[RMDB]
RNA sequence: GGGAACGACUCGAGUAGAGUCGAAAACUCUUAUAUUCUUUCUUUAUAUGCUUAUGAGAGAACAAAAAUUCUAAGUGUGUAAAAUAGCUGACUGUAAAUGAGGUAUUACCAUCUUGGGGAAAGGCUUAUCAUCCUAGAUUUUGGUUCAUUGGCCACCUAUUGUGCUGAUAUUCGUAUCAGCACAAUAAAAAGAAACAACAACAACAAC
Reactivity to DMS in 0.01 (KOAc 150mM, MgCl2 10mM, bicine 150mM(pH8.5), 24C), signal-to-noise 2, nucleotides 027 to 156: c030u000c010u020u000a180u000a130u010u000c020u020u000u000c030u010u000u010a110u020a120u030g010c040u010u010a060u010g010a030g010a150g030a060a140c040a060a140a140a100a210u030u000c010u010a030a060g020u000g050u000g020u010a010a050a100a140u010a080g040c040u000g010a090c090u000g030u000a030a020a120u000g020a090g000g020u010a040u000u010a060c040c030a060u000c020u000u010g010g010g000g010a020a040a110g030g000c050u000u010a070u000c010a100u000c040c000u010a090g010a240u000u000u010u020g000g000u000u000c050a100u010u000g020g000c070c020a040c100c050
Reactivity to 2A3 in 0.01 (KOAc 150mM, MgCl2 10mM, bicine 150mM(pH8.5), 24C), signal-to-noise 3, nucleotides 027 to 156: c020u020c030u040u100a150u060a110u180u010c010u070u140u020c040u040u260u080a200u060a060u290g010c000u010u020a130u180g030a030g020a020g070a100a040c070a040a180a050a060a070u100u020c010u060a040a060g020u010g000u000g010u060a010a060a070a120u070a070g020c050u040g060a060c000u050g070u140a070a060a100u090g010a040g000g040u060a070u110u130a030c020c020a030u060c040u070u080g010g000g000g030a060a080a030g060g000c040u080u080a060u060c020a010u020c000c000u040a110g020a300u070u150u090u090g030g000u030u020c020a040u040u070g020g020c000c000a030c050c010